[RMDB]
RNA sequence: GGGAACGACUCGAGUAGAGUCGAAAACAUAUACGGCAAGGUUUCCCCUAGAGACUAUUUGAGAGGGCUCGCAAGGGGAGUAUUGAUAGGAUCCUCGAUUUGCUUCUUGACGAGAAUGACAAAUAUCUAGUCUCUGAAGAUUCGUCUUCAGAGACUAAAAAGAAACAACAACAACAAC
Reactivity to DMS in 0.01 (KOAc 150mM, MgCl2 10mM, bicine 150mM(pH8.5), 24C), signal-to-noise 3, nucleotides 027 to 126: c080a090u040a100u010a110c080g010g000c050a100a030g010g000u020u010u000c010c010c040c040u000a120g010a080g000a080c080u010a050u000u020u010g000a190g050a160g000g000g020c020u000c030g000c160a090a050g000g020g000g000a020g010u020a020u000u010g000a100u010a070g030g000a100u010c040c020u020c040g020a060u000u010u030g000c010u000u000c010u000u000g010a120c120g010a060g000a020a020u010g010a150c090a030a050a030u030a080u040c100
Reactivity to 2A3 in 0.01 (KOAc 150mM, MgCl2 10mM, bicine 150mM(pH8.5), 24C), signal-to-noise 5, nucleotides 027 to 126: c020a000u190a010u060a180c070g050g000c030a040a080g090g020u010u050u030c000c000c000c000u040a050g000a000g000a060c040u030a120u260u230u230g110a180g020a050g060g180g030c010u010c050g030c110a060a030g010g020g000g010a010g010u040a040u010u070g100a040u050a140g010g130a060u040c010c030u000c020g040a050u040u030u080g030c020u010u020c000u040u040g080a070c070g030a030g020a070a050u090g020a070c040a040a080a030u120a040u070c040